[RMDB]
RNA sequence: GGGAACGACUCGAGUAGAGUCGAAAAUCACCGAGCAGGGCCACAUCGUGCCGACCACCUCGGUGGGCAACUCGGCGAGCUUCGCGAUCUUCGCCAAGCAGGUCAUCGUCGAGAUCAACCUGGCCCAUCGUAUACGCGAUUUCGAUCGCGUAUACGAAAAAGAAACAACAACAACAAC
Reactivity to 2A3 in 0.01 (KOAc 150mM, MgCl2 10mM, bicine 150mM(pH8.5), 24C), signal-to-noise 2, nucleotides 027 to 126: u030c020a060c060c000g000a060g060c080a130g020g000g000c030c010a060c010a220u170c130g100u100g010c030c010g060a050c020c030a060c020c090u090c110g030g000u020g000g050g000c010a000a030c000u010c000g000g000c010g000a030g010c010u040u050c040g020c000g040a100u090c060u300u150c070g020c050c010a010a000g010c010a030g120g160u170c060a050u010c080g010u000c000g030a000g000a010u100c030a000a060c000c010u010g040g000c050c000c000a030
Reactivity to DMS in 0.01 (KOAc 150mM, MgCl2 10mM, bicine 150mM(pH8.5), 24C), signal-to-noise 3, nucleotides 027 to 126: u000c030a120c000c010g000a030g050c190a100g010g000g000c010c010a020c090a140u020c150g000u000g050c070c040g000a140c050c060a160c190c110u000c100g020g030u000g000g020g010c050a080a120c000u000c000g010g000c000g010a010g010c000u000u000c300g010c010g000a090u010c210u020u000c020g010c000c050a040a020g040c020a150g010g020u010c180a180u000c020g000u000c000g000a040g000a080u000c110a070a080c100c100u000g000g000c000c000c000a120

Overview:
This 177-nucleotide RNA was probed chemically with 2A3 and DMS. Conditions: 150 mM KOAc, 10 mM MgCl2 and 150 mM bicine (pH 8.5), 24 C. The 2A3 profile rests on 2,556 reads. It was measured as part of the RMDB library OK2TST.